[RMDB]
RNA sequence: GGGAACGACUCGAGUAGAGUCGAAAAAAGGAGUGAGGGUCCAAUUUCUCGGCUUCUUCAAUACUUACUAUUGUCUUUUUGAUAUAUCCAUCUCAGUAGGUAUGAAGUAGCAGCUCAUUGUGGUUUUGAUUUUCAUUUCCAUAAUGUCUAAUGUCGACGGUAUUACCUGGUUCGCCAGGUAAUACCGAAAAGAAACAACAACAACAAC
Reactivity to 2A3 in 0.01 (KOAc 150mM, MgCl2 10mM, bicine 150mM(pH8.5), 24C), signal-to-noise 1, nucleotides 027 to 156: a020a020g000g020a030g000u140g040a130g130g080g040u010c050c010a130a190u000u100u050c090u000c130g160g010c020u050u040c000u020u000c090a170a090u010a050c020u030u030a020c000u040a140u100u030g060u060c030u160u300u200u080u190g050a040u060a000u010a030u000c130c040a120u090c120u080c170a000g010u000a000g060g000u000a010u010g010a020a000g010u030a000g010c030a070g010c030u020c100a000u030u000g030u030g080g000u010u010u010u010g110a160u140u140u180u200c000a000u010u110u020c000c000a020u000a040a010u010g060u030c020u040a260a000u210g090u160c040g080a060
Background:
This 207-nucleotide RNA was probed chemically with 2A3. For 2A3 the reverse transcriptase was SuperScript II with manganese. The reactions ran in a buffer of 150 mM KOAc, 10 mM MgCl2 and 150 mM bicine (pH 8.5), at 24 C.